[RMDB]
RNA sequence: GGGAACGACUCGAGUAGAGUCGAAAAGGCGCGCGAUGAACGAGGUGACGUCUCCGGGCGGACAGGGCCCGGCCUUCGGGGCCGCCUGAGGGAGCCGAGAAGGGCAGACGAUGAAGGCGGGCGGAUAUAUUGAAAGGAUAUUCGUAUCCUUUCAAUAAAAAGAAACAACAACAACAAC
Reactivity to 2A3 in 0.01 (KOAc 150mM, MgCl2 10mM, bicine 150mM(pH8.5), 24C), signal-to-noise 6, nucleotides 027 to 126: g030g000c020g000c000g020c030g100a130u120g060a100a020c050g030a060g020g050u060g050a050c010g030u010c010u000c010c010g000g010g000c020g030g040a060c050a110g090g050g030c010c000c000g020g020c010c000u040u030c020g020g000g040g020c010c030g040c020c010u010g000a070g010g030g010a010g010c010c000g080a080g060a100a070g030g010g000c020a020g020a040c030g020a030u120g050a020a020g030g000c010g000g000g000c030g010g010a030u080a010
Reactivity to DMS in 0.01 (KOAc 150mM, MgCl2 10mM, bicine 150mM(pH8.5), 24C), signal-to-noise 9, nucleotides 027 to 126: g010g010c030g020c050g000c060g010a100u020g010a070a120c050g010a100g020g010u010g010a140c050g010u010c020u000c020c010g000g000g010c020g010g010a130c190a130g010g010g010c020c020c010g010g010c030c010u010u010c030g010g000g010g000c040c090g000c010c010u000g010a110g020g000g010a180g010c020c010g000a150g010a100a110g010g000g010c030a060g000a090c050g010a120u020g010a090a080g000g000c040g000g000g010c020g000g000a070u030a100